The record gives the reactivity of an RNA of 207 nucleotides to 2A3 and DMS.

RNA sequence: GGGAACGACUCGAGUAGAGUCGAAAAUAACGGCCGGCCAGACACUACAACGGUUCGCAGAUGGGCCGGGGGCGUCAAAACCCUGUAGUGUCACUCUACAUCUGCUAGUGCUGUUCCGGGUUACUUGGUUCAGUGCGAAAUAAUAGGUAACUCGCCAUCGAUAAUAUAACUUCGGUUAUAUUAUCGAAAAAGAAACAACAACAACAAC
Reactivity to 2A3 in 0.01 (KOAc 150mM, MgCl2 10mM, bicine 150mM(pH8.5), 24C), signal-to-noise 6, nucleotides 027 to 156: u120a050a050c050g080g020c030c010g040g030c040c020a030g010a010c000a010c010u020a000c010a170a060c050g050g000u040u040c070g000c020a040g040a130u080g010g000g000c010c020g000g000g000g010g000c020g030u120c030a040a040a050a100c000c010c010u030g000u000a010g000u000g020u030c070a050c060u190c060u110a070c010a040u010c010u020g010c000u010a020g010u010g030c010u000g000u020u000c010c000g000g010g000u020u010a010c010u020u030g020g000u020u030c020a010g020u030g060c020g040a030a020a050u280a040a050u040a060g000g000u010a010a010c020u000c110g060c050c020a040
Reactivity to DMS in 0.01 (KOAc 150mM, MgCl2 10mM, bicine 150mM(pH8.5), 24C), signal-to-noise 2, nucleotides 027 to 156: u010a060a110c040g030g000c010c040g000g010c050c030a270g000a020c000a020c010u010a000c010a050a090c040g010g000u020u010c040g020c070a290g010a170u000g000g010g030c020c000g000g010g000g030g000c010g000u010c300a120a170a120a060c020c010c000u010g080u000a020g000u000g000u010c030a070c050u000c060u020a050c030a080u000c040u000g000c020u000a190g030u010g010c000u000g020u010u000c030c010g000g010g020u000u000a030c000u000u000g050g010u000u000c040a120g040u000g040c110g040a070a080a080u000a100a220u000a040g000g000u000a010a030c020u000c030g010c060c040a170
About this RNA
It was measured as part of the RMDB library ARCHII. Reactivities are given for positions 27 through 156.